Conditions: 150 mM KOAc, 10 mM MgCl2 and 150 mM bicine (pH 8.5), 24 C. The record gives the reactivity of an RNA of 177 nucleotides to 2A3 and DMS. DMS adducts were read by reverse transcription with MarathonRT. The DMS profile rests on 8,812 reads.

RNA sequence: GGGAACGACUCGAGUAGAGUCGAAAAGGAACUAUGUUCAGGCAUGAAGCCUCCACGUGCGUGCGAAAGCACCCGGAAACGGCUGAGCAUAGUUCCGAGCUGAAGGAGGCACGGCUCAAAAUAAAAACAUAUUUAUGCGUUUCGACGCAUAAAUAUGAAAAGAAACAACAACAACAAC
Reactivity to 2A3 in 0.01 (KOAc 150mM, MgCl2 10mM, bicine 150mM(pH8.5), 24C), signal-to-noise 6, nucleotides 027 to 126: g000g000a000a000c000u000a000u000g010u000u000c000a000g000g010c000a000u010g040a100a040g000c000c000u000c000c000a040c010g000u000g000c000g000u000g000c010g050a110a020a040g000c000a000c000c000c000g020g000a050a060a030c010g000g000c000u000g000a010g000c000a000u000a000g000u000u000c000c000g000a000g000c000u020g030a140a070g000g000a000g000g010c030a020c010g000g000c000u000c000a060a080a010a010u290a030a070a020a000a000
Reactivity to DMS in 0.01 (KOAc 150mM, MgCl2 10mM, bicine 150mM(pH8.5), 24C), signal-to-noise 4, nucleotides 027 to 126: g000g010a000a000c000u000a000u010g000u000u000c000a000g020g020c000a000u010g000a120a120g030c000c000u000c000c010a300c000g010u000g000c000g040u020g020c000g010a110a120a140g010c000a010c000c000c000g000g010a110a060a210c000g000g010c000u000g000a000g010c010a000u010a010g000u000u000c000c030g000a010g000c010u000g000a080a080g010g010a010g010g020c010a300c030g010g000c000u000c010a070a080a090a040u050a080a050a070a070a160